[RMDB]
RNA sequence: GGGAACGACUCGAGUAGAGUCGAAAAGAUAUGGAACUGUGUACACAGCAACAGCAUAGGAACCAUAAAUAAGUCGGAAACGACUUAUUUAUGGUUCCUAUGACAUGCUGGUACCAGUUCCUAAGUCGGCUUAUAGUAUCUUCGGAUACUAUAAGCCAAAAGAAACAACAACAACAAC
Reactivity to DMS in 0.01 (KOAc 150mM, MgCl2 10mM, bicine 150mM(pH8.5), 24C), signal-to-noise 2, nucleotides 027 to 126: g000a110u010a300u010g000g000a000a010c000u000g000u050g010u000a010c010a220c000a010g030c000a050a090c300a230g020c000a000u020a020g000g000a020a030c000c000a000u000a000a010a030u000a000a010g010u000c000g000g000a190a070a170c010g020a030c000u000u000a000u000u000u000a010u000g000g000u000u000c000c000u000a000u000g000a040c080a180u010g030c000u000g000g010u000a000c010c000a020g010u000u000c010c010u000a020a100g030u010c110
This 177-nucleotide RNA was probed chemically with DMS. For DMS the reverse transcriptase was MarathonRT. The reactions ran in a buffer of 150 mM KOAc, 10 mM MgCl2 and 150 mM bicine (pH 8.5), at 24 C. It was measured as part of the RMDB library TTRINS.